[RMDB]
RNA sequence: GGGAACGACUCGAGUAGAGUCGAAAAUAUGGGUUUUAUUCCGGAGAGGGAGCCUGAGAGAUGGCUGCCACGUCCAAGGACGGCAGCAGGCGCGAAACUUACCCAAUGAACGUUGAGGUAGUUACGAAAUGUCUGGAGUAUUCGUACUCCAGACAUUAAAAGAAACAACAACAACAAC
Reactivity to 2A3 in 0.01 (KOAc 150mM, MgCl2 10mM, bicine 150mM(pH8.5), 24C), signal-to-noise 1, nucleotides 027 to 126: u300a040u100g000g010g040u040u090u060u170a220u120u000c010c010g100g050a180g000a050g000g150g000a010g010c040c020u060g000a080g000a000g000a060u210g020g030c020u110g000c000c000a060c020g000u000c000c000a050a000g130g000a000c000g000g010c020a000g000c000a000g130g000c030g000c020g030a100a100a000c000u000u000a020c020c010c000a000a010u140g020a300a000c080g000u000u010g000a100g030g080u000a020g010u020u090a020c070g050a140
Reactivity to DMS in 0.01 (KOAc 150mM, MgCl2 10mM, bicine 150mM(pH8.5), 24C), signal-to-noise 3, nucleotides 027 to 126: u020a110u020g000g010g000u000u010u010u010a120u020u020c040c030g030g000a140g000a160g000g010g020a080g000c000c000u000g010a110g010a160g010a090u040g000g010c000u000g000c020c020a090c120g010u020c020c020a070a140g000g010a050c050g010g010c010a030g000c010a060g020g000c080g000c090g010a070a040a030c030u000u000a050c000c000c010a040a040u040g000a110a100c190g010u000u000g010a090g000g030u000a020g010u000u000a120c100g000a070
Notes
Chemical mapping of a 177-nucleotide RNA with 2A3 and DMS. For 2A3 the reverse transcriptase was SuperScript II with manganese. The RNA was probed in 150 mM KOAc, 10 mM MgCl2 and 150 mM bicine (pH 8.5) at 24 C. The data come from the RNA Mapping Database (RMDB), libraries RFM100 and RFMREP.